Annotation: The record gives the reactivity of an RNA of 177 nucleotides to 2A3 and DMS. DMS adducts were read by reverse transcription with MarathonRT.

[RMDB]
RNA sequence: GGGAACGACUCGAGUAGAGUCGAAAAGCGAGUUUGUUCGCAAACUCGCAAAGAAAGCUCGAGCGAAGGGAACCCAAACCACGCUCGAGCUAGGGACCCAAAAAAUCUACGGCUUCGGCCGUAGAAACAAUGUAGCUAUCUUCGGAUAGCUACAUUGAAAAGAAACAACAACAACAAC
Reactivity to 2A3 in 0.01 (KOAc 150mM, MgCl2 10mM, bicine 150mM(pH8.5), 24C), signal-to-noise 1, nucleotides 027 to 126: g000c000g010a000g010u000u000u040g030u030u040c030g000c040a000a000a000c000u000c000g000c010a010a010a000g020a040a100a000g000c000u000c000g000a000g020c010g090a190a100g070g010g000a110a130c020c070c000a070a050a010c000c000a010c010g000c000u000c000g000a000g010c000u000a010g000g010g020a030c010c000c000a030a110a030a000a010a040u010c000u000a000c000g000g020c020u000u100c220g120g000c000c010g010u000a000g000a000a000a010
Reactivity to DMS in 0.01 (KOAc 150mM, MgCl2 10mM, bicine 150mM(pH8.5), 24C), signal-to-noise 4, nucleotides 027 to 126: g020c000g010a010g010u000u000u000g010u000u030c210g020c000a010a000a010c010u000c000g020c000a030a050a100g000a110a110a040g010c000u000c000g000a020g010c000g010a140a080g010g000g010a100a200c080c070c100a080a100a160c000c010a180c000g000c000u000c000g000a000g010c000u000a010g010g000g010a190c010c000c010a000a030a090a060a090a100u000c000u000a000c000g010g000c000u000u020c220g020g010c000c000g010u000a000g000a010a060a120